[RMDB]
RNA sequence: GGGAACGACUCGAGUAGAGUCGAAAACCUCUUCAGGCCUUCGUCCGGUAACAACCGUUCAGUAUGAUCCCGCAGCACUAUCGUUCUUAUUGAACGCUCGUGUUGACUGGGAUUUCGGUAAUGGCGAUAGUGCGAACCUUGUCAUUAAUGACUUUCUGGAAACUUUAGUGUUCGCACUAAAGUUUCCAAAAGAAACAACAACAACAAC
Reactivity to 2A3 in 0.01 (KOAc 150mM, MgCl2 10mM, bicine 150mM(pH8.5), 24C), signal-to-noise 2, nucleotides 027 to 156: c000c000u030c020u180u160c060a040g020g000c010c010u020u030c010g040u040c000c070g030g060u120a100a060c080a050a050c020c020g080u120u170c110a100g080u150a160u230g050a010u030c000c000c000g000c000a000g000c000a000c000u010a010u010c000g000u000u020c030u100u260a300u120u260g000a000a020c000g010c000u000c010g010u040g010u030u040g010a080c000u050g000g010g030a000u010u010u000c000g000g010u060a100a060u100g010g000c010g020a020u140a120g190u200g040c020g030a020a020c010c000u090u210g050u040c020a030u060u290a140a100u160g030a050c000u000u030u110c140u030
Chemical mapping of a 207-nucleotide RNA with 2A3. Conditions: 150 mM KOAc, 10 mM MgCl2 and 150 mM bicine (pH 8.5), 24 C.